Annotation:
An RNA of 177 nucleotides, treated with DMS and 2A3 and read out base by base. The reactions ran in a buffer of 150 mM KOAc, 10 mM MgCl2 and 150 mM bicine (pH 8.5), at 24 C. 2A3 adducts were read by reverse transcription with SuperScript II with manganese. Source: RMDB libraries RFM100 and RFMREP, as collected in RNAgym. For DMS the reverse transcriptase was MarathonRT.
[RMDB]
RNA sequence: GGGAACGACUCGAGUAGAGUCGAAAAAAGUGUCUUAUUUUUUAAGUAUUUCAAAGUAAAAUUACAUGUUAAUACGUAGUAUUAAUGGCGAGACUCCUGAGGGAGCAGUGCCAGUCGAAGACCGAGGAAUGACGGUAGAAUUCGUUCUACCGUCAUUAAAAGAAACAACAACAACAAC
Reactivity to DMS in 0.01 (KOAc 150mM, MgCl2 10mM, bicine 150mM(pH8.5), 24C), signal-to-noise 4, nucleotides 027 to 126: a060a080g010u030g010u000c010u000u000a000u000u010u020u040u010u030a070a100g000u000a030u010u000u010c030a030a080a130g010u010a030a070a070a090u030u030a020c040a120u020g010u020u000a020a010u000a010c010g010u020a090g010u020a020u000u010a030a050u010g000g000c000g000a280g010a100c000u000c000c000u010g040a150g030g000g010a010g020c040a160g020u020g010c000c010a040g000u000c130g000a050a030g000a040c010c030g000a180g010g000
Reactivity to 2A3 in 0.01 (KOAc 150mM, MgCl2 10mM, bicine 150mM(pH8.5), 24C), signal-to-noise 3, nucleotides 027 to 126: a000a000g140u060g010u000c000u000u130a160u050u280u100u030u010u030a120a000g000u030a060u010u060u020c120a210a160a030g000u020a030a100a210a150u160u100a000c000a040u100g020u120u080a000a010u040a090c090g070u060a080g000u020a200u040u160a250a200u020g000g000c010g010a080g030a160c000u000c000c000u050g000a170g030g000g020a000g000c000a000g000u090g090c000c000a000g030u020c060g030a020a000g000a000c000c000g000a030g070g090